Conditions: 150 mM KOAc, 10 mM MgCl2 and 150 mM bicine (pH 8.5), 24 C. The record gives the reactivity of an RNA of 177 nucleotides to 2A3 and DMS. Values cover nucleotides 27 to 126. 2A3 adducts were read by reverse transcription with SuperScript II with manganese. DMS adducts were read by reverse transcription with MarathonRT.
RNA sequence: GGGAACGACUCGAGUAGAGUCGAAAAGGGAGAGCCGUGGCCCAGGCUCCUACAUUGCCUUGGGGAGGAGAGUCAGGCCCUGCAGGGAAGGGUUGUGAACCUGCUCUGGGCAAAUGGGCCUGGCUCCUACUCAAUACCUCUUCGGAGGUAUUGAGUAAAAAGAAACAACAACAACAAC
Reactivity to 2A3 in 0.01 (KOAc 150mM, MgCl2 10mM, bicine 150mM(pH8.5), 24C), signal-to-noise 2, nucleotides 027 to 126: g050g050g020a150g010a000g040c050c030g080u070g080g030c020c040c010a020g000g020c040u060c000c000u110a140c040a140u070u260g080c000c010u050u090g030g000g030g030a040g030g030a100g000a010g120u000c010a000g000g000c020c010c010u000g050c070a040g000g040g150a110a070g110g020g000u110u130g150u090g040a020a020c000c000u010g040c010u050c060u050g030g030g000c000a040a040a050u060g000g020g020c000c000u000g000g000c000u010c010c000
Reactivity to DMS in 0.01 (KOAc 150mM, MgCl2 10mM, bicine 150mM(pH8.5), 24C), signal-to-noise 5, nucleotides 027 to 126: g010g010g010a120g010a040g020c020c020g010u010g020g010c020c010c020a300g010g000c030u010c030c060u010a070c090a110u010u000g000c020c020u000u010g010g000g020g020a170g020g000a100g010a030g010u000c000a030g000g010c000c000c000u000g010c040a030g000g000g000a100a070g000g010g010u000u000g010u010g000a120a180c000c000u000g010c000u000c040u000g000g000g010c080a010a040a070u000g020g000g010c000c000u000g010g000c000u000c000c050